Chemical mapping of a 177-nucleotide RNA with DMS. It was measured as part of the RMDB library TTRDEL.
RNA sequence: GGGAACGACUCGAGUAGAGUCGAAAAGAUAUGGACGUAUGGACAGCGAAGAACUCGGAAACGAGGGAGCUGCCAUGACGUCCUAAGUCAAAACAUGGCUCUUGCUGUUCGCAGCAAGAGCCAUGAAUCAAUUAGCAGGCUUCGGCCUGCUAAUUGAAAAAGAAACAACAACAACAAC
Reactivity to DMS in 0.01 (KOAc 150mM, MgCl2 10mM, bicine 150mM(pH8.5), 24C), signal-to-noise 2, nucleotides 027 to 126: g000a060u000a300u000g000g000a000c030g020u000a010u000g000g000a160c010a010g010c000g000a090a160g000a110a230c020u000c000g000g010a130a110a300c010g000a010g020g000g020a070g060c000u000g000c000c010a000u000g050a020c000g010u000c000c000u000a000a050g000u020c080a120a100a120a190c000a000u000g010g000c000u000c000u010u000g040c000u000g020u000u030c250g010c020a010g030c000a000a000g000a000g000c030c010a000u000g000a040a170